[RMDB]
RNA sequence: GGGAACGACUCGAGUAGAGUCGAAAACUCAGCUACCUGGGAGGCUAAGGCACAAGAAUUGCUCGAGCCUAGGAGGUGAAGGUUGCAGUGAGCCAAGGCGGUGCCACUGCACUCCAGCCUGGGCAACGCCUGGUCAGCGUUUCGACGCUGACCAGGCAAAAGAAACAACAACAACAAC
Reactivity to DMS in 0.01 (KOAc 150mM, MgCl2 10mM, bicine 150mM(pH8.5), 24C), signal-to-noise 1, nucleotides 027 to 126: c060u000c020a060g000c060u000a060c010c020u000g000g020g050a040g000g010c000u000a080a100g050g010c070a090c240a090a090g000a130a180u000u000g010c000u000c090g020a110g040c040c000u000a060g000g010a170g000g000u010g050a060a160g060g000u000u000g000c020a000g000u000g020a300g000c030c000a080a130g020g020c130g030g010u000g020c070c020a020c030u010g000c000a020c030u000c020c000a060g000c000c000u000g010g000g000c060a050a060c210
Reactivity to 2A3 in 0.01 (KOAc 150mM, MgCl2 10mM, bicine 150mM(pH8.5), 24C), signal-to-noise 1, nucleotides 027 to 126: c010u020c010a000g030c030u050a070c000c020u000g000g020g040a120g040g000c020u030a020a060g000g040c030a020c020a140a050g060a190a170u190u100g010c020u040c040g080a050g100c000c000u010a020g020g040a030g020g070u070g030a140a070g100g000u180u070g000c010a010g000u010g000a070g020c000c000a000a100g300g040c140g010g000u140g070c080c000a040c040u030g020c030a020c010u010c000c000a020g030c000c000u010g000g020g000c030a080a030c090